[RMDB]
RNA sequence: GGGAACGACUCGAGUAGAGUCGAAAAGAGCAAAUCAUCAAUUUCAACUUCUUUAAUAUCACUGUAAAGCUUAUUACCGCUGACGAGGUCAGCCAUAGCAGGCAAAGUAAGCACUUGUACAGCCAGCGUUUCUAACUGCUCCAAAAUCGCCUGACGAGCAUUAAGCAUUAUUCGUAAUGCUUAAUGCAAAAGAAACAACAACAACAAC
Reactivity to 2A3 in 0.01 (KOAc 150mM, MgCl2 10mM, bicine 150mM(pH8.5), 24C), signal-to-noise 8, nucleotides 027 to 156: g050a010g030c050a050a090a090u060c040a040u060c040a100a160u120u140u110c050a090a080c040u140u100c040u090u210u110a180a090u200a100u180c060a040c050u020g060u120a050a060a030g020c010u030u040a030u050u120a170c030c040g000c020u020g010a030c050g150a060g100g090u020c020a000g000c020c020a080u120a060g040c030a030g030g000c020a060a030a020g020u030a030a010g020c010a030c090u070u110g070u100a040c010a010g030c040c000a030g010c060g040u020u060u020c020u030a050a110c020u050g000c010u040c020c000a040a100a080a130u080c040g020c030c000u040g060a080c050g040a020
Reactivity to DMS in 0.01 (KOAc 150mM, MgCl2 10mM, bicine 150mM(pH8.5), 24C), signal-to-noise 2, nucleotides 027 to 156: g020a130g000c040a090a110a100u010c020a160u000c060a130a110u000u010u000c030a030a060c030u000u000c030u000u010u000a080a130u000a080u000c040a040c040u020g000u000a070a090a080g020c020u010u000a060u000u000a060c020c040g020c020u000g010a060c040g000a110g040g010u000c040a050g000c040c020a070u000a090g000c060a090g050g010c030a070a060a130g020u000a050a060g010c020a070c100u000u000g020u010a040c020a080g000c050c040a070g010c050g020u000u000u000c030u000a060a050c040u000g000c020u000c010c020a030a050a050a110u010c040g020c020c030u000g030a090c040g010a240